[RMDB]
RNA sequence: GGGAACGACUCGAGUAGAGUCGAAAAGGAGGUGUCGUUAGAGGCCGGUUUUGCGACGGCAGUUUUUCUGUGUUGCGCGAGACCUUGAUGCUGAUUCCGGCCUAUUUGCAUCGGUCGUUUGCCUCCAGGCACGUGGCGUGUUCGCGCGCUGCGUGCCAAAAGAAACAACAACAACAAC
Reactivity to 2A3 in 0.01 (KOAc 150mM, MgCl2 10mM, bicine 150mM(pH8.5), 24C), signal-to-noise 9, nucleotides 027 to 126: g020g010a010g000g010u040g030u060c020g020u050u100a040g020a030g060g000c010c010g010g020u060u090u140u150g010c010g010a010c000g100g020c020a020g010u030u060u050u160u110c010u010g040u010g010u030u040g020c020g000c010g020a040g000a020c000c000u040u230g010a010u010g000c050u090g050a060u170u050c000c000g000g000c000c000u060a120u050u160u120g000c000a010u000c000g000g010u020c030g020u050u170u160g020c000c000u000c000c000a010
Reactivity to DMS in 0.01 (KOAc 150mM, MgCl2 10mM, bicine 150mM(pH8.5), 24C), signal-to-noise 6, nucleotides 027 to 126: g000g000a010g000g010u000g020u010c010g010u000u010a100g020a080g000g000c000c010g000g000u030u020u020u020g020c020g000a020c010g010g020c000a010g000u010u020u020u030u020c020u000g010u000g010u000u000g000c030g000c050g000a140g000a000c010c010u030u040g030a010u000g000c000u010g010a120u010u020c010c000g000g000c000c000u000a090u010u020u010g000c000a000u000c000g000g000u000c010g020u020u030u040g010c010c000u000c010c010a210